[RMDB]
RNA sequence: GGGAACGACUCGAGUAGAGUCGAAAACAACACUUAAGGAUCAGAGGUUUCUCAGGGGCUGCAAGUUGCAAACUGUGGGAGAUUAUGGGGGGACUCGGUCUAAUGAGGAACCGGAAUCUCCAGGGAGUCUAGUAGUCACAUUCGUGUGACUACUAGAAAAAGAAACAACAACAACAAC
Reactivity to DMS in 0.01 (KOAc 150mM, MgCl2 10mM, bicine 150mM(pH8.5), 24C), signal-to-noise 4, nucleotides 027 to 126: c060a110a090c120a090c070u010u000a090a150g000g000a050u000c060a080g000a110g010g000u000u000u000c010u010c020a100g010g010g000g000c070u000g000c080a060a080g000u000u000g010c100a060a060a100c090u000g020u000g010g010g000a030g010a040u000u010a060u010g010g000g010g000g020g000a290c020u000c010g030g010u020c120u010a070a090u030g020a040g000g010a200a140c010c010g000g000a030a050u000c010u010c010c020a150g010g000g010a100g000
Reactivity to 2A3 in 0.01 (KOAc 150mM, MgCl2 10mM, bicine 150mM(pH8.5), 24C), signal-to-noise 2, nucleotides 027 to 126: c010a020a010c040a030c090u200u140a110a090g070g010a060u090c070a030g050a060g140g040u010u110u010c060u010c050a020g010g020g050g000c030u050g040c060a080a120g040u100u040g060c010a060a100a070c040u120g040u140g250g060g000a040g000a000u050u080a100u190g170g010g000g000g000g000a010c000u000c020g050g000u000c070u070a050a090u200g020a010g030g010a010a000c010c000g020g010a000a010u000c010u000c010c010a000g010g050g020a030g000
An RNA of 177 nucleotides, treated with DMS and 2A3 and read out base by base. The RNA was probed in 150 mM KOAc, 10 mM MgCl2 and 150 mM bicine (pH 8.5) at 24 C. 2A3 adducts were read by reverse transcription with SuperScript II with manganese.